Description:
The data come from the RNA Mapping Database (RMDB), library OK3TST. The record gives the reactivity of an RNA of 207 nucleotides to 2A3 and DMS. For 2A3, 835 sequencing reads were counted.

RNA sequence: GGGAACGACUCGAGUAGAGUCGAAAAGCCAGUUUUAUUGAGCACAGUCAGUAUACUAGGCACUGUGAUGAAUAAACACUUUACAUAUAUCUUAGCACUUUUAAUGCUUAGUGAUUGUCAUUACCCUUUUUUUUAAUAGAUGAGGAAAUUGAGGUACUAUGCUAAUUUCGUUCGCGAAAUUAGCAUAAAAAGAAACAACAACAACAAC
Reactivity to 2A3 in 0.01 (KOAc 150mM, MgCl2 10mM, bicine 150mM(pH8.5), 24C), signal-to-noise 2, nucleotides 027 to 156: g030c010c000a010g000u010u020u010u030a030u010u070g110a050g030c010a020c010a010g030u090c000a010g120u070a180u100a300c200u200a180g130g000c040a020c060u020g000u000g040a070u050g030a020a010u040a040a020a030c060a020c030u110u220u120a030c060a000u200a020u030a070u140c020u010u030a020g030c000a020c010u000u140u220u300a110a130u070g000c000u000u050a010g000u100g050a080u090u100g050u050c040a040u000u120a050c000c000c000u120u020u010u010u000u000u000u120a120a100u150a110g120a140u130g070a060g040g030a060a020a070u020u050g020a070g040g010u050a100c060
Reactivity to DMS in 0.01 (KOAc 150mM, MgCl2 10mM, bicine 150mM(pH8.5), 24C), signal-to-noise 1, nucleotides 027 to 156: g080c050c020a100g020u000u000u000u020a060u000u000g010a070g000c040a020c030a060g000u010c030a140g010u010a160u000a200c100u000a110g020g020c090a010c020u030g030u010g000a010u000g000a030a030u000a050a050a080c080a060c030u000u020u000a080c040a100u010a210u000a060u010c020u000u010a030g020c010a030c030u010u000u000u000a040a050u000g010c020u010u000a060g040u000g010a150u000u020g000u010c030a110u000u000a130c010c010c000u030u000u000u000u000u020u000u000a100a110u000a120g000a180u010g010a130g010g000a030a020a090u000u000g010a110g020g000u000a060c210